The record gives the reactivity of an RNA of 177 nucleotides to 2A3 and DMS. 2A3 adducts were read by reverse transcription with SuperScript II with manganese. Conditions: 150 mM KOAc, 10 mM MgCl2 and 150 mM bicine (pH 8.5), 24 C. DMS adducts were read by reverse transcription with MarathonRT. For DMS, 899 sequencing reads were counted.

RNA sequence: GGGAACGACUCGAGUAGAGUCGAAAAGAUAUGGAGCAAGACAUGAUGGCGUAUCGGAAACGAUACCCCCAUCAACAGCUUGUCUCCUAAGUCAAAACACGUGCAAAUGUUCGCAUUUGCACGUGAAGUGUCAAGUCAGGUUCGCCUGACUUGACACAAAAGAAACAACAACAACAAC
Reactivity to 2A3 in 0.01 (KOAc 150mM, MgCl2 10mM, bicine 150mM(pH8.5), 24C), signal-to-noise 1, nucleotides 027 to 126: g040a010u070a000u130g010g010a020g000c010a020a000g050a100c070a140u130g000a010u000g020g030c000g020u000a000u010c000g040g010a040a040a060c010g000a010u020a020c060c010c000c000c000a010u010c000a010a080c020a030g120c000u020u050g040u100c010u000c020c000u020a110a040g040u010c020a020a030a000a110c010a000c040g010u020g000c000a000a000a000u020g030u090u100c300g030c210a000u010u000u000g020c010a010c050g010u000g010a000a000
Reactivity to DMS in 0.01 (KOAc 150mM, MgCl2 10mM, bicine 150mM(pH8.5), 24C), signal-to-noise 2, nucleotides 027 to 126: g030a040u000a300u000g000g020a070g010c000a010a000g000a030c090a290u000g000a000u010g020g010c300g000u000a010u030c000g020g000a070a080a210c010g000a000u000a000c030c020c260c060c040a010u010c030a020a030c300a160g000c000u000u000g000u030c000u000c000c010u000a030a020g000u010c000a090a000a090a200c050a000c030g000u010g000c000a010a000a010u000g010u000u000c200g030c030a010u000u000u000g010c010a000c000g000u000g000a010a030